This 177-nucleotide RNA was probed chemically with 2A3 and DMS.
[RMDB]
RNA sequence: GGGAACGACUCGAGUAGAGUCGAAAAGCCGACGUGCACGCACACCAUCUCGCCGCGGUCACACAUGUUGACGACAUGCUGCCGCGAUACCCCGAGUAUCUGCGCGGCCUCACUCGUCUUCAGCAGAAGAGUAGAUACAGUUCGCUGUAUCUACUCUAAAAGAAACAACAACAACAAC
Reactivity to 2A3 in 0.01 (KOAc 150mM, MgCl2 10mM, bicine 150mM(pH8.5), 24C), signal-to-noise 6, nucleotides 027 to 126: g040c000c020g060a130c060g060u100g020c040a020c100g030c010a040c010a040c070c020a070u060c040u030c080g030c030c010g030c040g040g070u100c020a010c000a010c000a120u070g020u020u040g050a030c030g010a010c020a040u040g010c020u030g030c030c020g010c000g000a010u030a020c000c010c030c040g050a130g080u020a030u020c070u170g050c020g000c000g060g000c000c000u010c010a040c010u040c010g020u000c000u050u020c020a060g000c000a020g050a200
Reactivity to DMS in 0.01 (KOAc 150mM, MgCl2 10mM, bicine 150mM(pH8.5), 24C), signal-to-noise 7, nucleotides 027 to 126: g010c030c010g000a090c120g030u010g020c050a060c070g000c050a080c080a070c060c050a070u000c040u000c040g020c060c030g020c060g000g000u010c090a070c140a090c100a080u000g000u000u010g010a050c060g020a080c070a060u000g010c090u000g010c040c030g000c010g000a030u000a030c020c020c130c140g000a200g010u000a020u000c030u010g020c050g010c030g010g010c010c100u000c070a060c170u010c030g010u000c010u000u000c040a070g010c100a100g000a120
Description: It was measured as part of the RMDB library OK2TRN. For DMS the reverse transcriptase was MarathonRT.